[RMDB]
RNA sequence: GGGAACGACUCGAGUAGAGUCGAAAAACGGAUGGUACGCCAUCCGACCAUUGGGUAGAAGCGUUCAAUCAGCACCGUGACGGUGCAGAUGGGAAAUUGCCCAUGAUACGCACCAUACGAGGUGCGAAAAAGCCAUCGGUGUUCGCACCGAUGGCAAGAUUGACACUAUGUUCGCAUAGUGUCAAUCAAAAGAAACAACAACAACAAC
Reactivity to DMS in 0.01 (KOAc 150mM, MgCl2 10mM, bicine 150mM(pH8.5), 24C), signal-to-noise 1, nucleotides 027 to 156: a200c020g010g000a030u000g020g000u000a050c240g060c000c020a020u000c000c000g040a050c000c020a160u000u020g000g010g050u000a050g030a090a100g010c100g030u000u010c020a070a000u000c010a170g040c010a020c000c000g040u000g030a140c060g050g000u000g030c030a010g010a000u000g000g010g010a010a190a090u000u000g050c000c020c000a040u010g020a120u000a120c030g020c010a020c010c030a110u000a160c170g010a210g020g010u000g000c030g000a000a010a010a080a070g000c000c000a020u000c000g030g000u000g020u000u010c230g000c010a070c020c000g000a000u020g010g030c000a000a020
Reactivity to 2A3 in 0.01 (KOAc 150mM, MgCl2 10mM, bicine 150mM(pH8.5), 24C), signal-to-noise 2, nucleotides 027 to 156: a010c000g000g000a010u010g010g030u070a050c220g060c030c000a010u020c000c000g010a010c010c010a110u070u110g010g010g000u040a060g030a170a020g050c030g040u050u070c040a050a070u020c020a030g010c000a000c000c010g100u230g240a150c210g000g000u000g000c020a020g010a000u010g000g040g000a010a100a050u030u050g010c010c010c000a000u030g020a010u040a030c010g000c000a000c000c000a040u100a200c150g090a120g040g010u000g000c000g020a040a010a000a010a000g010c000c000a000u000c000g000g000u020g030u050u110c160g010c070a000c010c000g000a000u000g000g000c000a000a000